RNA sequence: GGGAACGACUCGAGUAGAGUCGAAAAGAUAUGGAGAUCGUAGUUGAGUGGAGAAGCUCGGAAACGAGACUUCGAUGAAACUCAGGUUCGAAGAUCUCCUAAGUCAAAACUAGCGUUCGCGCUAGAACAUACAUGGUUUCUUCGGAAACCAUGUAUGAAAAGAAACAACAACAACAAC
Reactivity to 2A3 in 0.01 (KOAc 150mM, MgCl2 10mM, bicine 150mM(pH8.5), 24C), signal-to-noise 4, nucleotides 027 to 126: g030a020u060a040u160g000g000a010g000a030u010c020g040u050a090g220u050u030g020a010g020u020g010g010a020g000a020a000g000c000u000c010g020g040a090a070a020c010g000a010g120a240c010u000u000c020g080a300u020g000a010a000a000c010u010c010a000g050g190u140u150c110g070a110a030g000a020u000c000u000c000c000u000a020a000g020u010c010a000a010a120a160c000u000a010g000c020g020u060u050c300g010c010g000c160u010a010g020a040a020
Reactivity to DMS in 0.01 (KOAc 150mM, MgCl2 10mM, bicine 150mM(pH8.5), 24C), signal-to-noise 6, nucleotides 027 to 126: g020a050u010a300u010g000g000a030g000a010u010c000g010u000a210g010u010u000g000a020g010u000g000g010a060g020a000a000g000c000u000c000g010g000a070a120a200c010g010a010g000a150c000u000u000c000g000a100u010g000a140a150a020c010u000c010a020g000g000u000u010c080g000a140a300g000a020u000c000u010c000c000u000a020a050g010u000c030a120a080a120a160c000u010a000g010c000g020u000u020c270g030c010g000c000u000a000g000a120a200